RNA sequence: GGGAACGACUCGAGUAGAGUCGAAAACUCAGCGAGAGCACGGCGCGCCUGACGCCGUACGCCCUCGUCAACAUGACGAAUGUAACGUCGAUGGAGGGCACGAUCGUGCUGCAUGGCGCGAUGCCGAGACCGGUCAUGCUUUCGAGCAUGACCGGUCAAAAGAAACAACAACAACAAC
Reactivity to DMS in 0.01 (KOAc 150mM, MgCl2 10mM, bicine 150mM(pH8.5), 24C), signal-to-noise 2, nucleotides 027 to 126: c010u000c070a230g040c030g020a120g000a130g010c030a060c030g020g020c000g000c030g030c060c010u010g010a280c210g000c050c030g020u010a010c190g040c010c000c020u000c000g000u000c090a120a120c070a130u060g030a050c020g020a150a120u020g000u070a100a120c060g010u000c000g000a090u030g000g000a120g020g000g010c020a010c010g000a090u000c020g000u010g010c010u000g010c070a160u000g000g010c020g000c050g000a080u010g070c010c050g000a130
Reactivity to 2A3 in 0.01 (KOAc 150mM, MgCl2 10mM, bicine 150mM(pH8.5), 24C), signal-to-noise 2, nucleotides 027 to 126: c010u000c030a030g040c050g090a060g000a020g100c070a010c060g050g000c000g050c010g040c010c010u030g010a040c000g010c000c000g000u000a010c030g000c000c000c000u000c000g070u020c000a070a070c030a180u200g010a010c030g030a160a100u300g060u260a250a060c000g000u000c030g030a000u050g160g020a030g030g020g020c040a010c050g060a040u220c030g080u160g060c050u070g000c040a070u170g050g000c020g050c010g040a010u070g000c000c000g070a050